RNA sequence: GGGAACGACUCGAGUAGAGUCGAAAACGUGCGUACUGGGCCGCCGGCACAAUGUUCAACCCAGCCGUCUCAGAGGACGCGGUUCGACAACGAUCAGCCAGCCGGUCAGCGGGGUCCUCCUAGCUAGAAUGAUAGCCUAUUUCGAUAGGCUAUCAUUAAAAGAAACAACAACAACAAC
Reactivity to DMS in 0.01 (KOAc 150mM, MgCl2 10mM, bicine 150mM(pH8.5), 24C), signal-to-noise 6, nucleotides 027 to 126: c070g010u000g010c060g020u010a080c070u010g010g010g020c050c080g020c070c040g010g010c030a080c080a090a130u000g010u000u010c130a080a110c040c000c050a130g020c100c020g010u010c040u010c140a170g010a130g020g000a020c040g020c080g010g000u000u000c090g000a040c050a060a100c160g000a100u000c130a080g000c030c040a100g010c050c020g030g010u000c050a060g000c040g000g010g000g000u000c030c020u000c020c040u000a070g010c090u010a090g000
Reactivity to 2A3 in 0.01 (KOAc 150mM, MgCl2 10mM, bicine 150mM(pH8.5), 24C), signal-to-noise 2, nucleotides 027 to 126: c020g020u080g000c010g050u070a070c020u070g050g030g040c030c000g040c010c020g010g000c020a040c000a090a120u150g020u150u090c020a020a030c020c000c030a040g040c070c020g040u020c030u000c090a170g080a130g120g050a010c010g000c050g040g000u020u050c060g030a020c020a120a010c030g070a140u100c020a010g030c030c020a010g040c050c030g020g010u040c050a020g030c020g000g010g000g030u040c020c010u030c000c000u040a090g010c020u010a050g080

Structure probing data (DMS and 2A3) for a 177-nucleotide construct. The data come from the RNA Mapping Database (RMDB), library OK2TRN. Reactivities are given for positions 27 through 126. Values are in units of 0.01, from 0 to 300, in steps of 10.